RNA sequence: GGGAACGACUCGAGUAGAGUCGAAAAACGCACGUUGCAACCCCGGGCUUCUCUGAAAUUUAAAGGAAGUGAAAGCCCCAUUGCACGUGCUAAAUUGAUGCCAUUCGUGUUGCAGUUCAUCUCGUUAGCGUUUUUAAUAGUUCGCUAUUAAAAACGCAAAAGAAACAACAACAACAAC
Reactivity to DMS in 0.01 (KOAc 150mM, MgCl2 10mM, bicine 150mM(pH8.5), 24C), signal-to-noise 1, nucleotides 027 to 126: a090c300g000c000a020c010g000u000u000g000c000a000a010c100c090c240c300g020g010g020c000u000u010c030u000c030u020g010a100a090a170u000u030u030a070a080a150g000g010a120a040g070u000g000a050a030a020g000c000c000c000c190a050u000u000g030c010a020c020g000u000g010c000u000a010a020a090u000u000g010a060u000g030c030c030a000u000u000c090g000u010g050u000u000g020c060a070g030u000u000c110a110u000c010u020c070g000u000u000a080